[RMDB]
The record gives the reactivity of an RNA of 207 nucleotides to 2A3 and DMS. The RNA was probed in 150 mM KOAc, 10 mM MgCl2 and 150 mM bicine (pH 8.5) at 24 C. It was measured as part of the RMDB library RNAMAK. 2A3 adducts were read by reverse transcription with SuperScript II with manganese.
RNA sequence: GGGAACGACUCGAGUAGAGUCGAAAAGGGGUCAGUAGCGAAGGUAGAGGAGCAUCGAUCUAUACUGAAGCCUCCACGGUAUAGGGAGCUCCGAUUGUGUUGACGCUACUGACGGAGGCACCCAAAACUCAAUGACGACUUCGGUCGUCAUUGAGAACUAAAUACUGUGCUUCGGCACAGUAUUUAGAAAAGAAACAACAACAACAAC
Reactivity to 2A3 in 0.01 (KOAc 150mM, MgCl2 10mM, bicine 150mM(pH8.5), 24C), signal-to-noise 4, nucleotides 027 to 156: g080g010g060g020u010c010a010g010u010a000g010c030g120a210a040g140g070u230a090g080a150g170g020a000g010c020a060u300c030g020a010u000c020u000a010u010a000c000u020g030a080a020g020c010c000u000c000c000a000c000g000g000u000a000u000a000g000g000g020a010g010c010u030c050c000g000a020u060u060g050u040g090u150u180g060a020c030g000c000u000a000c000u000g000a000c000g000g000a000g000g000c000a010c000c000c000a050a090a070a090c000u010c000a000a000u000g000a000c000g000a000c000u050u090c270g120g000u000c000g010u010c000a000u000u000g000a000g000a000a000
Reactivity to DMS in 0.01 (KOAc 150mM, MgCl2 10mM, bicine 150mM(pH8.5), 24C), signal-to-noise 1, nucleotides 027 to 156: g030g040g020g020u000c000a010g010u000a020g000c010g000a060a140g040g000u000a150g060a300g020g020a010g050c030a200u000c150g020a140u020c000u000a030u000a010c020u000g020a010a110g020c010c000u000c000c000a300c050g000g000u000a040u000a010g000g000g000a040g010c040u000c000c010g010a050u000u020g000u000g060u010u000g040a300c010g000c020u000a000c040u000g020a030c040g000g060a010g080g070c040a100c000c000c040a060a070a090a200c010u000c000a020a010u000g010a000c000g000a020c010u000u010c300g060g000u000c010g010u000c000a000u000u010g000a000g000a080a200